Record summary:
Conditions: 150 mM KOAc, 10 mM MgCl2 and 150 mM bicine (pH 8.5), 24 C. The record gives the reactivity of an RNA of 177 nucleotides to 2A3 and DMS. Source: RMDB libraries RFM100 and RFMREP, as collected in RNAgym.
RNA sequence: GGGAACGACUCGAGUAGAGUCGAAAAGUGGACAGUAACUCGCCUUUACACGGGCGUUGGUAUCAGUUCUUGCUUCGAAGCUGCGAAUAGCGUCGCACUGGAAAGACCGGCGGAGAUCUGGCGCGAGCGUACCGAGCACAUUCGUGUGCUCGGUACGAAAAGAAACAACAACAACAAC
Reactivity to 2A3 in 0.01 (KOAc 150mM, MgCl2 10mM, bicine 150mM(pH8.5), 24C), signal-to-noise 5, nucleotides 027 to 126: g080u080g020g040a030c020a050g010u070a050a040c010u010c030g000c000c010u110u080u150a120c130a040c080g000g000g030c010g020u050u030g020g030u080a040u110c050a010g030u050u010c020u050u140g040c010u060u100c040g070a090a030g000c030u040g020c020g020a110a070u100a130g050c040g020u010c010g020c020a040c040u050g020g050a070a040a050g050a060c030c000g010g000c010g010g010a030g000a050u000c020u040g040g000c020g010c060g050a030g020
Reactivity to DMS in 0.01 (KOAc 150mM, MgCl2 10mM, bicine 150mM(pH8.5), 24C), signal-to-noise 2, nucleotides 027 to 126: g000u000g020g000a050c050a110g020u010a020a070c060u000c000g020c030c000u000u020u030a160c250a120c300g000g010g010c020g000u000u000g010g000u000a050u000c070a060g010u030u020c000u000u030g020c040u000u000c060g000a090a050g010c040u000g000c060g000a090a090u020a080g020c070g030u010c010g000c070a070c060u000g000g000a080a060a130g020a090c050c050g020g020c060g000g040a090g000a050u010c030u010g000g000c050g000c100g020a050g000